[RMDB]
RNA sequence: GGGAACGACUCGAGUAGAGUCGAAAACAGGUCGAUAGUACCAAUAACCCUGGUACCAAUAAGGUACUAUCGACCAUUUAGCUCUUCUUCUACAACACGCUCGCUGAAGAAGAGCGUUUCUGGUACCAGGGAAGCGAGCGGAAGGCCGAGAGGCCGACGUCCUGCAUCAUUUCGAUGAUGCAGGACGAAAAGAAACAACAACAACAAC
Reactivity to 2A3 in 0.01 (KOAc 150mM, MgCl2 10mM, bicine 150mM(pH8.5), 24C), signal-to-noise 1, nucleotides 027 to 156: c030a020g050g000u000c000g020a000u010a000g020u010a000c000c030a040a180u250a120a190c000c000c000u030g000g000u010a000c010c030a080a060u200a210a070g000g000u000a000c000u000a000u000c000g010a010c000c010a010u050u060u110a010g000c020u000c000u000u000c010u010u000c000u060a070c040a210a040c120a080c110g010c000u010c000g000c000u010g000a000a000g000a000a000g000a010g000c000g000u050u280u070c070u030g000g000u010a000c000c000a000g010g010g000a000a000g000c000g000a010g000c000g030g000a060a040g020g030c050c010g050a070g010a040g080g000c000c000g010a000